Notes
Structure probing data (2A3 and DMS) for a 207-nucleotide construct. The 2A3 profile rests on 1,870 reads. For DMS, 3,178 sequencing reads were counted. Values are in units of 0.01, from 0 to 300, in steps of 10.
RNA sequence: GGGAACGACUCGAGUAGAGUCGAAAAAGAAGGUAGACAGGUGAAGGUCUAUGGGAAGAACAUUCUGGGCAACAGGAACAACAAGCUUAGAGGCCCUAUCAGAAGCAUGUUGUGUUCGAGGGAAAGAAAAAUGGCUUGUGUGGCUACAGUAGAGUGAAGGAGCGUAAUUAUUCGUAAUUACGCUCCUAAAAGAAACAACAACAACAAC
Reactivity to 2A3 in 0.01 (KOAc 150mM, MgCl2 10mM, bicine 150mM(pH8.5), 24C), signal-to-noise 3, nucleotides 027 to 156: a000g080a020a010g030g020u060a010g010a070c030a010g070g000u080g050a090a050g030g030u010c030u060a050u090g030g000g020a020a020g030a070a050c070a080u070u030c040u120g010g010g000c020a050a030c010a070g080g040a040a000c000a010a010c010a120a000g030c000u050u080a030g020a010g120g050c020c030c000u030a080u090c070a060g030a050a000g010c030a030u060g010u080u030g010u070g060u080u070c030g010a050g030g040g020a000a060a080g090a030a080a070a010a030u080g020g020c000u040u010g010u020g030u030g090g000c020u060a020c040a070g050u120a020g030a020g080u120g060a050
Reactivity to DMS in 0.01 (KOAc 150mM, MgCl2 10mM, bicine 150mM(pH8.5), 24C), signal-to-noise 2, nucleotides 027 to 156: a100g020a070a030g010g010u010a100g020a070c080a090g010g030u000g000a130a070g030g000u000c030u000a090u010g000g030g010a060a070g000a050a090c030a140u010u010c060u030g000g020g040c010a050a060c080a100g000g000a090a120c030a060a070c030a010a110g000c030u010u000a160g000a140g040g050c060c020c010u000a060u020c020a100g000a050a160g010c030a080u000g000u000u000g010u000g000u000u000c000g010a130g000g030g000a100a050a080g010a010a030a050a060a080u000g010g000c000u000u000g000u010g040u000g000g020c000u000a020c060a070g030u000a060g010a090g030u010g020a130